[RMDB]
The record gives the reactivity of an RNA of 207 nucleotides to DMS and 2A3. The reactions ran in a buffer of 150 mM KOAc, 10 mM MgCl2 and 150 mM bicine (pH 8.5), at 24 C. DMS adducts were read by reverse transcription with MarathonRT.
RNA sequence: GGGAACGACUCGAGUAGAGUCGAAAAGGACGUGCUGUCGCGUCCGAAUUAACGACAGCAACUAGCCUGUCACCAACCAGGCGAAUUAUGUUGGUGCAAUGAGGCGAAAGCCUCUAUCAGACUGGGACAUAGCAGUCGAAUUAUCUAUGUCAUUAGAAAUAAAUGCUAUGUUCGCAUAGCAUUUAUUAAAAGAAACAACAACAACAAC
Reactivity to DMS in 0.01 (KOAc 150mM, MgCl2 10mM, bicine 150mM(pH8.5), 24C), signal-to-noise 3, nucleotides 027 to 156: g000g000a080c060g060u000g020c000u000g010u000c020g020c010g010u000c200c080g000a050a080u000u030a070a070c030g040a030c000a020g000c000a110a070c130u000a270g000c000c020u000g010u000c030a300c040c030a080a110c110c010a060g020g000c050g010a080a070u000u010a080u010g020u000u000g010g000u010g020c080a050a090u010g020a040g030g040c000g020a150a120a260g040c020c010u000c000u000a050u000c100a190g000a110c020u010g010g010g010a020c030a020u000a010g000c040a170g030u000c030g030a050a120u000u000a070u000c010u010a000u010g000u000c020a200u000u010a160g000a100
Reactivity to 2A3 in 0.01 (KOAc 150mM, MgCl2 10mM, bicine 150mM(pH8.5), 24C), signal-to-noise 5, nucleotides 027 to 156: g000g000a000c000g030u050g000c010u000g000u000c000g010c000g000u000c010c000g000a020a070u200u110a070a030c000g000a000c000a000g010c000a030a060c070u060a040g010c010c000u010g020u060c000a000c000c000a000a000c000c000a000g010g020c090g020a030a090u290u170a090u140g000u000u000g010g000u000g010c000a040a140u150g000a000g000g000c000g040a090a050a000g010c020c000u000c000u010a080u070c010a020g000a010c000u000g000g020g010a000c010a010u010a010g000c010a000g010u010c050g010a030a030u180u100a050u130c010u010a000u000g010u020c000a010u040u160a040g080a020